[RMDB]
RNA sequence: GGGAACGACUCGAGUAGAGUCGAAAAAGAGAGAGUCGUGAUGAGCUGAUCGACUAGACGUACACAUGCGCUCAUGUCAUGGAUGGUACGAUCAUCUAGACUAGGUACAUGAUGCUAGAGUACCAUGACCACGACCCAGAUUCGUCUGGGUCGUGGUAAAAGAAACAACAACAACAAC
Reactivity to DMS in 0.01 (KOAc 150mM, MgCl2 10mM, bicine 150mM(pH8.5), 24C), signal-to-noise 2, nucleotides 027 to 126: a060g000a160g000a180g000a050g020u000c000g020u000g010a210u000g010a090g000c160u010g000a120u000c060g010a090c000u020a020g010a080c060g030u000a090c200a080c010a050u000g000c130g000c160u010c080a090u040g000u020c030a070u030g000g000a030u000g000g010u000a130c150g000a070u000c010a020u000c050u000a080g000a070c010u000a250g020g000u000a070c010a060u000g010a140u010g000c070u000a060g000a100g020u010a110c010c000a040u010g000
Reactivity to 2A3 in 0.01 (KOAc 150mM, MgCl2 10mM, bicine 150mM(pH8.5), 24C), signal-to-noise 1, nucleotides 027 to 126: a010g150a010g010a010g000a020g000u070c030g000u020g000a080u120g050a040g020c120u040g010a070u020c030g000a020c020u070a060g010a100c030g000u050a000c030a000c020a060u030g000c020g000c060u000c100a040u080g040u000c030a120u100g070g070a010u030g060g000u130a100c030g000a090u070c020a000u000c020u000a010g040a100c020u020a030g040g060u080a040c030a040u130g040a060u030g110c040u100a050g020a020g100u030a030c020c020a060u090g090

This 177-nucleotide RNA was probed chemically with DMS and 2A3. Values cover nucleotides 27 to 126. It was measured as part of the RMDB library OK2TRN. The DMS profile rests on 933 reads.